[RMDB]
RNA sequence: GGGAACGACUCGAGUAGAGUCGAAAAGAAACCGAUUGGAGAGAUGACGGCACUGUGAAAUGGACAAUACGAGAAGUUGAUCUGCACGAAGUGUCUGUAUGCACAUUCCCGGCUUAUGAAGAUACGGGCGUACAGGCGAGACAUGCACAGGUGGAACGUGAUUCUUAUAAUUCGUUAUAAGAAUCACAAAAGAAACAACAACAACAAC
Reactivity to 2A3 in 0.01 (KOAc 150mM, MgCl2 10mM, bicine 150mM(pH8.5), 24C), signal-to-noise 9, nucleotides 027 to 156: g050a050a040a000c040c030g060a090u030u110g030g010a030g010a000g010a030u060g030a020c030g010g020c030a010c070u040g020u020g100a050a080a100u110g020g020a020c030a060a050u080a090c070g020a020g020a140a020g010u040u050g030a080u030c030u050g010c030a020c080g040a090a020g030u020g000u100c010u000g010u010a010u030g050c070a040c020a210u100u110c010c000c000g010g000c030u180u130a170u300g110a080a040g010a050u120a170c010g000g010g000c010g010u010a010c000a010g000g020c010g010a020g020a010c030a020u070g010c040a030c010a050g020g040u040g010g040a060a020c050
Reactivity to DMS in 0.01 (KOAc 150mM, MgCl2 10mM, bicine 150mM(pH8.5), 24C), signal-to-noise 5, nucleotides 027 to 156: g000a110a100a130c020c010g010a130u010u010g020g000a090g020a100g010a080u000g020a090c070g020g020c040a080c050u000g030u000g010a050a090a100u000g010g020a070c060a050a090u000a080c050g000a110g030a070a080g020u000u000g020a060u000c020u010g010c040a090c040g000a100a140g030u010g020u010c010u000g010u000a030u000g000c010a050c040a160u000u000c020c010c010g010g000c090u000u000a110u000g010a110a080g010a130u010a060c040g010g020g000c060g000u000a020c010a040g020g010c020g010a160g010a090c040a030u000g010c020a050c030a070g000g020u000g020g010a060a100c190